[RMDB]
RNA sequence: GGGAACGACUCGAGUAGAGUCGAAAAGCUGACCUCCACUGGGUGGAUUAAGGUCAAGGUAUGAAGUCCUAUUCGCUCCUGAUAGGAACGACUUCAUAUUGCUUAUAUGUGUGCUGAUGCACACAUAUCAAAACUCACGUUUCGACGUGAGUUUUGAAAAAGAAACAACAACAACAAC
Reactivity to 2A3 in 0.01 (KOAc 150mM, MgCl2 10mM, bicine 150mM(pH8.5), 24C), signal-to-noise 9, nucleotides 027 to 126: g030c050u020g000a000c000c000u000c000c010a010c060u270g170g140g080u020g000g020a050u170u140a080a040g000g000u010c020a020a030g060g000u000a000u000g000a000a000g010u020c010c010u030a040u030u100c070g050c100u050c020c060u090g040a070u060a050g020g030a040a030c080g080a010c020u000u000c010a010u000a010u010u100g010c040u120u060a040u010a000u090g010u000g010u000g000c030u160g130a190u300g000c000a000c000a000c000a000u000a000
Reactivity to DMS in 0.01 (KOAc 150mM, MgCl2 10mM, bicine 150mM(pH8.5), 24C), signal-to-noise 4, nucleotides 027 to 126: g000c070u010g000a000c000c010u000c000c010a000c000u010g030g010g020u000g000g010a130u010u020a120a040g010g020u000c000a190a110g000g010u010a000u000g000a010a010g000u000c020c060u000a120u000u000c100g020c060u010c030c020u010g000a110u010a060g000g010a070a060c110g000a120c000u000u000c000a010u000a000u010u000g010c040u010u010a090u000a010u000g010u010g010u000g010c010u010g000a190u020g020c000a000c010a000c000a000u000a020